Structure probing data (DMS and 2A3) for a 177-nucleotide construct. Reactivities are rounded to 0.1 and cut off at 0 and 3. For DMS the reverse transcriptase was MarathonRT.
RNA sequence: GGGAACGACUCGAGUAGAGUCGAAAAACCUGAUGAUUCGUCAUCAGGUCACAUGCCGCCCGAACGGGUUCCUGACCGGGCGGAUUCACUUUAAAUGGAGCACUGCUGCAUCAUUCGUGAUGCAGAACAUUAAGGAGCACUUCGGUGCUCCUUAAUGAAAAGAAACAACAACAACAAC
Reactivity to DMS in 0.01 (KOAc 150mM, MgCl2 10mM, bicine 150mM(pH8.5), 24C), signal-to-noise 4, nucleotides 027 to 126: a020c000c010u000g000a020u010g000a020u000u010c170g010u010c010a010u000c000a010g010g000u000c080a070c120a070u010g000c000c010g010c010c010c010g010a070a120c160g010g010g010u000u000c010c000u000g010a150c190c000g010g000g010c010g000g000a020u000u010c090a060c110u010u000u010a060a080a120u010g000g000a040g000c080a110c200u010g020c020u000g000c010a010u000c000a060u000u010c190g000u000g010a000u000g000c000a000g000a060a150
Reactivity to 2A3 in 0.01 (KOAc 150mM, MgCl2 10mM, bicine 150mM(pH8.5), 24C), signal-to-noise 3, nucleotides 027 to 126: a000c000c000u010g000a000u000g000a010u000u100c200g070u000c110a000u010c000a010g010g000u000c010a080c000a060u160g020c000c000g000c000c000c010g030a050a010c070g100g150g000u020u060c010c010u020g010a040c020c040g010g020g000c000g010g010a000u040u060c020a020c080u120u210u260a110a120a100u250g030g020a020g010c030a010c140u140g030c020u000g000c020a010u010c000a010u040u130c140g100u030g020a000u000g000c010a010g000a010a010